Notes:
Structure probing data (2A3 and DMS) for a 177-nucleotide construct. The RNA was probed in 150 mM KOAc, 10 mM MgCl2 and 150 mM bicine (pH 8.5) at 24 C. For DMS the reverse transcriptase was MarathonRT. Reactivities are given for positions 27 through 126.
RNA sequence: GGGAACGACUCGAGUAGAGUCGAAAAUAUUUAUCAGAUGUACCAAUUAAAGAUUUAGCGAAAUCAGAUAAAAUCCGAAAAUAUCCUAUUGGUAUUGGACCGUAUAAAGUUAAGAAAAUCGUUCCAGGAGCCUAAUUAAAUUCGUUUAAUUAGGCUCAAAAGAAACAACAACAACAAC
Reactivity to 2A3 in 0.01 (KOAc 150mM, MgCl2 10mM, bicine 150mM(pH8.5), 24C), signal-to-noise 1, nucleotides 027 to 126: u080a010u020u030u000a110u040c020a010g050a110u060g010u020a030c010c000a000a030u110u040a110a120a030g030a000u050u060u090a050g000c040g100a090a000a000u030c010a030g030a080u040a160a090a040a020u020c010c020g020a000a080a050a080u090a060u040c010c010u040a030u090u040g000g000u000a010u010u050g000g060a010c000c080g020u040a070u040a090a080a020g060u070u180a100a000g030a040a010a050a030u070c020g040u020u050c000c040a010g230
Reactivity to DMS in 0.01 (KOAc 150mM, MgCl2 10mM, bicine 150mM(pH8.5), 24C), signal-to-noise 2, nucleotides 027 to 126: u010a090u000u010u010a030u030c030a080g010a070u030g000u000a050c030c020a020a030u000u020a090a180a150g000a060u000u010u000a080g000c140g000a080a100a080u020c060a070g000a120u010a090a050a060a300u010c050c040g010a040a100a070a060u010a050u020c000c110u010a030u000u000g000g000u000a030u010u010g020g020a050c150c100g000u010a030u010a010a020a050g010u010u020a030a200g010a100a130a100a110u010c030g000u000u000c010c000a110g000

It was measured as part of the RMDB library OK2TRN. The 2A3 profile rests on 1,492 reads.